[RMDB]
RNA sequence: GGGAACGACUCGAGUAGAGUCGAAAAGAUAUGGACGUUUUACUAGACUUAAUACGACGAUAAGCAGAUAUCGGAAACGAUAUUCUGCUUUUGACGUCGAUUAAGUCUAGUAAAACGUCCUAAGUCAUCACUGUUCUUUCUUCGGAAAGAACAGUGAAAAAGAAACAACAACAACAAC
Reactivity to DMS in 0.01 (KOAc 150mM, MgCl2 10mM, bicine 150mM(pH8.5), 24C), signal-to-noise 2, nucleotides 027 to 126: g000a050u010a300u010g000g000a000c010g040u000u000u000u010a010c000u000a000g010a030c000u000u000a000a030u000a180c010g020a020c000g030a190u000a010a010g000c000a000g020a020u000a000u000c000g000g010a140a100a230c000g010a000u000a000u020u000c000u000g000c010u000u000u000u010g010a170c060g010u000c000g010a040u020u000a000a010g010u000c000u000a010g010u000a000a000a000a010c010g020u000c000c010u000a010a050g010u000c030a250
Chemical mapping of a 177-nucleotide RNA with DMS. Reactivities are given for positions 27 through 126. The reactions ran in a buffer of 150 mM KOAc, 10 mM MgCl2 and 150 mM bicine (pH 8.5), at 24 C. The DMS profile rests on 2,108 reads.